[RMDB]
RNA sequence: GGGAACGACUCGAGUAGAGUCGAAAAAAUACAAUGAAUAAUUUGGGCGAAUGGGCAGCGUAUCUUGUUAACACAACAGCGUGUCCCAACACGAAUGUGACAUUGUGUAUGAUUAACCCGCAUUUACUGCCAAAUGGAACGGACACUCGAACAAAUAUGCUUGAAUCAUUUUCGAAUGAUUCAAGCAAAAAGAAACAACAACAACAAC
Reactivity to DMS in 0.01 (KOAc 150mM, MgCl2 10mM, bicine 150mM(pH8.5), 24C), signal-to-noise 2, nucleotides 027 to 156: a090a080u000a030c010a000a030u020g000a170a120u010a060a140u000u000u010g020g010g040c080g010a090a100u000g040g020g020c020a080g010c030g000u000a040u000c100u010u000g040u000u010a090a090c180a120c000a050a020c070a080g000c030g020u030g010u000c040c000c010a150a070c030a120c040g010a050a070u020g020u000g000a210c050a070u010u010g010u010g010u010a110u010g010a180u000u010a090a080c010c020c010g000c050a060u000u010u000a060c030u010g000c010c000a020a030a130u010g020g010a080a040c060g000g020a100c050a040c090u000c070g010a040a020c030a060a050a040u010a150
Reactivity to 2A3 in 0.01 (KOAc 150mM, MgCl2 10mM, bicine 150mM(pH8.5), 24C), signal-to-noise 2, nucleotides 027 to 156: a000a000u140a020c070a050a070u050g040a010a100u110a110a040u010u020u010g090g010g000c030g060a150a030u040g020g040g010c080a070g020c030g040u100a080u060c030u050u080g040u050u090a080a030c040a010c010a140a020c000a050g040c020g040u010g040u080c000c000c000a000a010c040a000c000g180a200a020u100g010u020g050a000c010a070u010u020g010u000g010u030a070u080g060a050u070u020a020a050c000c000c000g020c000a000u170u140u010a040c050u050g060c030c000a010a040a000u020g040g010a110a000c050g010g020a000c000a010c080u070c040g020a100a000c030a010a060a090u000a090
Chemical mapping of a 207-nucleotide RNA with DMS and 2A3. The RNA was probed in 150 mM KOAc, 10 mM MgCl2 and 150 mM bicine (pH 8.5) at 24 C. Values cover nucleotides 27 to 156.